Conditions: 150 mM KOAc, 10 mM MgCl2 and 150 mM bicine (pH 8.5), 24 C.
The record gives the reactivity of an RNA of 207 nucleotides to 2A3 and DMS.
[RMDB]
RNA sequence: GGGAACGACUCGAGUAGAGUCGAAAACGCAGAGGGUUCUGAUAACAAAGAAGCUAGAUAGCCGCAUCGGUAUUAUAGGAUGUAGUCGGUGAGCCGGAAUGCCUGCAUCGUAAGCCUAUAAGUAAAUUUAAGUGUAAUCACUUCGGUGAUUACACAACCAAUAACAUAUCUUCGGAUAUGUUAUUGGAAAAGAAACAACAACAACAAC
Reactivity to 2A3 in 0.01 (KOAc 150mM, MgCl2 10mM, bicine 150mM(pH8.5), 24C), signal-to-noise 6, nucleotides 027 to 156: c050g010c030a010g010a050g070g020g010u070u040c040u060g060a090u100a190a040c030a040a110a050g060a080a010g010c040u050a030g020a230u110a060g070c030c020g030c050a050u060c060g030g000u060a060u130u080a060u120a060g000g030a020u030g040u100a030g040u060c030g000g020u030g010a010g010c010c010g010g050a060a010u090g050c010c000u020g010c010a020u020c010g050u030a050a010g000c000c000u090a090u030a150a050g090u110a060a100a170u130u140u130a150a020g000u000g000u000a000a000u000c000a010c010u020u040c100g060g000u000g000a000u000u000a000c000a000c000a000a000
Reactivity to DMS in 0.01 (KOAc 150mM, MgCl2 10mM, bicine 150mM(pH8.5), 24C), signal-to-noise 3, nucleotides 027 to 156: c060g030c050a050g000a120g010g010g030u000u000c040u000g010a180u000a060a110c080a060a100a110g010a090a120g020c040u000a060g020a170u000a140g040c020c050g040c040a050u040c050g040g000u020a070u000u010a090u000a060g020g020a060u010g030u000a090g020u000c030g020g040u010g010a070g010c010c020g000g010a080a070u000g000c040c040u020g020c040a050u000c030g030u000a060a120g020c020c020u000a070u000a020a050g010u020a030a050a160u010u000u000a060a180g020u010g010u000a000a010u000c000a010c000u000u000c300g030g040u000g010a000u000u000a000c000a000c010a020a060

For 2A3 the reverse transcriptase was SuperScript II with manganese. For DMS, 5,520 sequencing reads were counted.